[RMDB]
RNA sequence: GGGAACGACUCGAGUAGAGUCGAAAAUACCGGGCCGCGCUUGAUCUGUUGGUGUCCGGUCGAUACCCCUUCGCAAGCCUGCCUCGCCGCUGCGUGCGGCUCGAAGGCGCCGAGGAUCUGCUGGCUAACGUAUAUGCGAGUUCGCUCGCAUAUACGUAAAAGAAACAACAACAACAAC
Reactivity to DMS in 0.01 (KOAc 150mM, MgCl2 10mM, bicine 150mM(pH8.5), 24C), signal-to-noise 3, nucleotides 027 to 126: u000a070c020c020g000g010g020c020c040g000c130g010c080u000u000g010a080u010c080u000g000u010u000g020g020u010g030u020c040c040g020g010u010c090g000a100u000a180c080c020c010c110u010u010c080g010c110a160a090g020c020c030u000g000c030c030u000c090g030c110c090g040c040u010g020c140g030u000g020c030g000g010c040u000c060g010a060a090g000g000c040g000c100c010g010a110g000g000a140u000c070u000g020c040u000g000g010c030u010a080
Reactivity to 2A3 in 0.01 (KOAc 150mM, MgCl2 10mM, bicine 150mM(pH8.5), 24C), signal-to-noise 2, nucleotides 027 to 126: u120a010c000c000g020g030g010c000c010g070c030g040c060u030u180g090a120u110c030u150g200u220u190g140g020u050g010u100c050c000g040g010u010c000g050a000u090a050c000c020c010c000u020u140c030g020c110a100a030g060c000c030u060g000c020c010u060c010g010c010c030g010c050u090g060c010g050u120g010c020g090g000c020u030c040g020a040a000g010g000c040g010c000c000g000a030g040g020a040u030c030u080g080c020u030g040g000c020u000a060